[RMDB]
RNA sequence: GGGAACGACUCGAGUAGAGUCGAAAAUGGUGGGUGGGGCCGCCAAAGUCACACUUCUCUUAAAAUUUUACCCAGGGCCAAUGCUAACAUGUAAAUAAACAAGUGAAUAAACAAAGGGGUGUUUAUGUAAGAAAAACAAAUAAAAAUGCUUGUGUAACCUUUUACGUCCAUUCGUGGACGUAAAAGGAAAAGAAACAACAACAACAAC
Reactivity to 2A3 in 0.01 (KOAc 150mM, MgCl2 10mM, bicine 150mM(pH8.5), 24C), signal-to-noise 1, nucleotides 027 to 156: u040g000g030u000g000g000g060u000g060g000g000g120c000c000g020c030c000a090a030a030g090u130c000a120c070a090c140u150u090c060u000c030u050u010a220a260a190a260u260u300u170u200a090c070c000c020a000g000g000g000c010c020a020a050u120g000c030u100a130a040c030a130u160g060u130a150a150a100u100a140a090a000c030a050a080g030u030g130a060a000u040a070a100a010c070a090a070a020g000g000g000g000u040g010u000u100u000a010u030g040u070a030a130g140a070a060a060a000a000c000a030a030a030u200a100a120a030a000a010u060g040c060u060u000g000u030g000u060a020a010